RNA sequence: GGGAACGACUCGAGUAGAGUCGAAAAAAAGAUGAGUUGGUUAAGCAGUCACUGUAUCGCCUGAACAUGAUGGACCCGAAUAAUCCGGAUGUCAUUGCGGCGGGAAUACGUCAGGCAUUGCGGCAAGCCUAGCAGUUAUAUUCGUAUAACUGCUAGGAAAAGAAACAACAACAACAAC
Reactivity to 2A3 in 0.01 (KOAc 150mM, MgCl2 10mM, bicine 150mM(pH8.5), 24C), signal-to-noise 7, nucleotides 027 to 126: a000a000a000g080a040u110g010a020g050u050u050g050g010u060u030a070a020g030c020a010g060u090c020a020c110u060g020u060a050u090c060g020c020c020u030g050a070a030c040a070u110g020a050u060g100g050a050c010c010c010g030a060a070u170a090a040u100c020c010g030g020a030u070g080u110c060a050u020u200g070c020g020g000c010g020g010g030a060a040u120a050c040g010u010c020a010g000g040c020a020u010u120g050c010g000g010c020a050a020g040
Reactivity to DMS in 0.01 (KOAc 150mM, MgCl2 10mM, bicine 150mM(pH8.5), 24C), signal-to-noise 9, nucleotides 027 to 126: a060a050a060g000a060u000g010a100g020u000u000g020g010u000u010a090a100g020c050a060g010u000c060a090c080u000g020u010a050u010c130g010c020c030u000g010a100a070c100a060u010g010a080u000g010g010a160c050c010c010g000a090a100u010a080a100u000c070c010g000g010a060u000g010u000c070a060u010u000g020c090g010g000c040g010g010g000a080a060u010a040c060g010u010c060a050g010g010c050a070u000u000g000c050g010g000c220a080a100g010

Chemical mapping of a 177-nucleotide RNA with 2A3 and DMS. Source: RMDB library OK2TST, as collected in RNAgym. The 2A3 profile rests on 12,307 reads. DMS adducts were read by reverse transcription with MarathonRT. The RNA was probed in 150 mM KOAc, 10 mM MgCl2 and 150 mM bicine (pH 8.5) at 24 C.